Description
Chemical mapping of a 177-nucleotide RNA with DMS and 2A3. 2A3 adducts were read by reverse transcription with SuperScript II with manganese. For DMS the reverse transcriptase was MarathonRT.
RNA sequence: GGGAACGACUCGAGUAGAGUCGAAAAUCGACUUCCUUCGGGAAGUCGAAAAUAACGGUCGGCUCAUGAAGCUAGUCGAACAUGCUGCUCGACCUUGACUAAAAAGAAUCUCGUUCGCGAGAUUCAACAACACACCUGUGUUCGCACAGGUGUGUUGAAAAGAAACAACAACAACAAC
Reactivity to DMS in 0.01 (KOAc 150mM, MgCl2 10mM, bicine 150mM(pH8.5), 24C), signal-to-noise 2, nucleotides 027 to 126: u000c000g000a030c000u000u000c000c000u000u010c290g030g020g000a020a020g030u000c010g000a010a010a030a040u000a100a080c150g010g020u000c010g010g000c000u010c010a030u000g000a110a300g010c030u030a100g030u010c080g000a100a160c020a020u000g010c170u010g000c020u010c010g010a020c010c010u020u010g010a050c090u000a020a090a050a150a070g000a030a020u000c000u000c020g010u010u010c200g000c000g010a010g000a010u000u000c010a080a110
Reactivity to 2A3 in 0.01 (KOAc 150mM, MgCl2 10mM, bicine 150mM(pH8.5), 24C), signal-to-noise 1, nucleotides 027 to 126: u010c000g000a000c000u000u020c000c010u010u030c150g090g020g000a000a000g010u000c000g000a000a000a000a000u070a020a030c040g000g000u010c000g000g020c000u000c030a020u020g010a040a030g020c090u110a100g240u300c050g010a040a030c000a000u020g040c030u050g020c040u100c160g000a000c000c000u000u040g040a040c020u030a050a080a000a050a060g020a000a030u010c000u000c010g040u050u030c240g000c010g050a010g020a010u020u030c000a000a000